RNA sequence: GGGAACGACUCGAGUAGAGUCGAAAAUUAAAACUAUCAGAUCUCAUGAGUCUUACAAGAACAGCAUGGGAAAGACCCACCCCCAUGAUUCAAUUAUCUCCCACGGGGUCCCUCCCACAACUCGUGGUAAAUGCGUGGAUUUCGAUCCACGCAUUUAAAAAGAAACAACAACAACAAC
Reactivity to 2A3 in 0.01 (KOAc 150mM, MgCl2 10mM, bicine 150mM(pH8.5), 24C), signal-to-noise 3, nucleotides 027 to 126: u100u080a050a050a040a080c060u070a050u100c030a030g060a220u000c000u000c070a010u050g050a030g040u000c040u080u210a130c080a150a110g050a100a010c030a050g150c000a020u030g010g000g040a070a020a010g070a020c010c000c020a020c000c000c020c010c000a010u010g030a060u090u140c030a070a090u090u060a090u180c070u050c010c010c000a030c000g000g000g000g040u020c000c000c010u020c000c010c000a070c030a020a080c040u040c050g020u020g040g030
Reactivity to DMS in 0.01 (KOAc 150mM, MgCl2 10mM, bicine 150mM(pH8.5), 24C), signal-to-noise 2, nucleotides 027 to 126: u010u030a050a120a070a070c060u040a040u010c080a050g030a210u020c030u000c010a030u000g000a020g030u000c010u000u040a090c110a120a070g000a110a090c170a040g040c010a000u000g030g020g020a020a030a060g010a160c040c020c000a220c140c030c000c000c010a030u010g010a060u040u040c060a090a140u030u000a100u000c060u000c070c000c020a040c070g000g000g010g010u030c070c040c060u000c000c000c020a080c210a030a060c040u000c040g000u000g000g000
An RNA of 177 nucleotides, treated with 2A3 and DMS and read out base by base.
For 2A3, 1,583 sequencing reads were counted.
The DMS profile rests on 2,492 reads.
Reactivities are rounded to 0.1 and cut off at 0 and 3.
The data come from the RNA Mapping Database (RMDB), library OK1LIB.